RNA sequence: GGGAACGACUCGAGUAGAGUCGAAAAACGGUGCGGUUUCUUAUGGAGGGCUGAACAAGUCCGCCAUGACUUGCUGGUUUGGACUGUGAGAGUGGUGGUUGGGUGUCUCAAGUAUCCUCUGGGGGUGCAUGGGAAUGUGGUUCGCCACAUUCCCAUGAAAAGAAACAACAACAACAAC
Reactivity to 2A3 in 0.01 (KOAc 150mM, MgCl2 10mM, bicine 150mM(pH8.5), 24C), signal-to-noise 1, nucleotides 027 to 126: a000c070g000g000u050g010c020g060g000u080u080u010c020u110u080a130u080g060g040a050g010g000g000c010u010g010a030a000c060a160a000g010u010c000c000g010c010c010a030u040g050a050c070u010u040g080c020u050g050g050u070u090u100g040g010a080c000u000g000u020g120a080g000a010g040u080g060g040u080g050g000u110u140g020g010g000u060g050u000c000u000c030a040a090g020u060a110u060c010c010u000c010u010g070g000g000g000g010u060g010
Reactivity to DMS in 0.01 (KOAc 150mM, MgCl2 10mM, bicine 150mM(pH8.5), 24C), signal-to-noise 2, nucleotides 027 to 126: a100c080g020g000u020g010c150g000g000u000u000u020c070u010u020a030u010g030g000a030g010g000g010c010u010g000a100a120c140a100a020g000u000c000c010g010c000c020a000u000g000a070c110u000u020g030c030u000g000g000u000u030u030g000g020a070c050u010g000u000g000a060g000a130g010u030g010g000u000g010g010u010u000g010g010g020u010g020u000c030u000c070a050a050g010u010a050u020c030c010u000c080u030g000g010g000g010g000u010g020